[RMDB]
RNA sequence: GGGAACGACUCGAGUAGAGUCGAAAAGAUAUGGAAUAUGGGCAGCUGCGUGAGAGGUCUAAUAGAUCGGAAACGAUCUAUUAGACUCCCCACCUCACGAACUACAGCGAUGCAUAUUCCUAAGUCAGUUAUUGUCAUUCUUCGGAAUGACAAUAACAAAAGAAACAACAACAACAAC
Reactivity to DMS in 0.01 (KOAc 150mM, MgCl2 10mM, bicine 150mM(pH8.5), 24C), signal-to-noise 3, nucleotides 027 to 126: g000a040u010a300u020g000g000a030a010u000a000u010g020g020g050c190a300g020c000u000g000c020g000u010g000a000g000a140g020g000u000c010u020a020a010u000a010g000a010u000c000g000g010a080a050a230c010g000a010u000c010u000a000u010u000a010g010a010c010u000c080c030c010c020a300c220c000u000c000a020c010g000a100a060c110u010a300c020a000g010c000g000a180u010g000c000a030u010a020u000u010c010c000u020a020a110g000u010c010a110
Reactivity to 2A3 in 0.01 (KOAc 150mM, MgCl2 10mM, bicine 150mM(pH8.5), 24C), signal-to-noise 1, nucleotides 027 to 126: g000a040u100a040u170g000g010a010a010u020a020u050g080g300g050c100a020g010c030u000g000c000g030u000g000a030g010a040g000g180u000c010u010a000a010u000a010g000a000u010c000g020g000a020a050a040c000g000a000u020c000u000a000u010u000a010g000a010c010u020c000c000c010c000a010c000c010u000c010a010c000g050a090a060c140u300a070c130a020g000c020g100a030u110g030c010a010u000a000u020u000c020c000u000a100a000g030u040c070a020